Chemical mapping of a 177-nucleotide RNA with DMS and 2A3. Source: RMDB library OK1LIB, as collected in RNAgym. The DMS profile rests on 2,439 reads. The RNA was probed in 150 mM KOAc, 10 mM MgCl2 and 150 mM bicine (pH 8.5) at 24 C. For 2A3 the reverse transcriptase was SuperScript II with manganese.

[RMDB]
RNA sequence: GGGAACGACUCGAGUAGAGUCGAAAAUGGUGUUAAGUGGAAUAAGUGGUCAGAUAUACAUAUAUGUACAGGGGGCUACAUAUAUGUAUAUGCCCCCUCGCGUCAGUAUAAGUAGGUAUAAGGUGGACAUAGGGCGUCAGUUCGCUGACGCCCUAUGAAAAGAAACAACAACAACAAC
Reactivity to DMS in 0.01 (KOAc 150mM, MgCl2 10mM, bicine 150mM(pH8.5), 24C), signal-to-noise 1, nucleotides 027 to 126: u070g000g030u000g000u000u020a070a070g040u020g060g000a030a040u020a120a060g010u030g010g050u000c120a030g030a110u000a030u000a000c010a030u000a000u020a050u000g000u010a060c150a130g020g050g000g000g000c100u000a010c030a000u000a040u000a010u000g000u000a000u000a010u020g010c040c020c000c000c000u010c010g030c060g000u010c020a050g000u000a010u010a050a100g020u000a060g020g000u010a010u010a020a000g000g050u030g010g030a230
Reactivity to 2A3 in 0.01 (KOAc 150mM, MgCl2 10mM, bicine 150mM(pH8.5), 24C), signal-to-noise 1, nucleotides 027 to 126: u090g000g000u080g070u060u070a090a070g070u110g040g110a080a000u160a300a130g030u000g040g050u000c010a030g040a140u060a000u010a060c000a000u120a000u010a000u150g010u010a090c100a100g160g000g000g000g000c000u000a000c010a030u000a000u000a040u030g040u000a010u000a000u000g020c000c000c000c000c000u000c000g000c000g010u090c060a070g000u030a040u000a080a030g080u110a030g100g070u010a080u010a180a030g100g000u080g000g000a000